Structure probing data (2A3) for a 207-nucleotide construct. The 2A3 profile rests on 1,080 reads. The reactions ran in a buffer of 150 mM KOAc, 10 mM MgCl2 and 150 mM bicine (pH 8.5), at 24 C.
[RMDB]
RNA sequence: GGGAACGACUCGAGUAGAGUCGAAAACGCGAUGGAUACGUCCAUCGCGAAUCCGUCCAAGCCGCGGACGUUAAACUGUGGCACGGUUGUGCCUAGGUGCAACCCUGCUCAACAUGGCGGCACCCCUGCCCAAGCUACCGUCUACGGACGGUAGCAACCAGGGCAUCCUAUUCGUAGGAUGCCCUGGAAAAGAAACAACAACAACAAC
Reactivity to 2A3 in 0.01 (KOAc 150mM, MgCl2 10mM, bicine 150mM(pH8.5), 24C), signal-to-noise 1, nucleotides 027 to 156: c000g000c000g010a010u020g010g010a000u010a090c240g070u040c000c000a000u010c010g000c000g000a000a000u040c020c000g020u000c010c000a060a050g000c000c000g000c010g000g000a000c010g010u010u040a010a020a000c090u030g000u060g010g030c000a000c010g000g050u010u010g000u050g010c060c080u160a300g160g000u010g020c000a000a020c020c040c000u000g010c030u030c080a000a130c030a060u080g020g020c000g000g000c000a100c000c040c000c020u060g070c020c020c020a050a000g000c000u000a000c000c000g010u000c000u010a040c260g140g000a000c000g010g000u000a000g000c000a000a000